[RMDB]
RNA sequence: GGGAACGACUCGAGUAGAGUCGAAAAUUUCAUUGAUAGGUAUAUCGAACGAAAAAUUUUCAUUUAAACGCUGAAUGGCAAUGAGUAUAUGAUAGAUUAAGCCAUCGAUAGCCGACUGAACUAAAUGAGAUGCCUGUGUAUUCGUACACAGGCAUCUAAAAGAAACAACAACAACAAC
Reactivity to DMS in 0.01 (KOAc 150mM, MgCl2 10mM, bicine 150mM(pH8.5), 24C), signal-to-noise 1, nucleotides 027 to 126: u040u030u030c030a010u010u010g000a030u000a020g000g090u000a060u000a000u000c010g030a040a120c050g000a030a020a000a020a060u000u000u000u030c000a090u010u020u010a040a060a090c080g000c000u000g050a070a020u090g000g100c090a100a170u000g000a110g030u010a030u060a020u000g000a000u030a090g000a030u000u010a150a200g000c070c070a070u000c030g000a000u040a000g050c010c000g000a140c260u040g000a050a040c190u010a010a030a140u000g000
Reactivity to 2A3 in 0.01 (KOAc 150mM, MgCl2 10mM, bicine 150mM(pH8.5), 24C), signal-to-noise 2, nucleotides 027 to 126: u000u000u020c050a050u000u180g030a020u000a030g040g000u010a030u000a000u300c030g000a040a180c000g000a030a030a030a030a030u190u160u000u000c140a200u050u050u050a210a210a000c000g000c030u110g140a230a240u200g090g000c000a000a060u100g020a160g300u150a120u000a110u300g120a000u080a160g030a060u040u120a110a000g020c040c060a010u000c020g000a030u000a000g080c070c010g240a070c020u000g000a020a010c000u170a040a170a220u300g000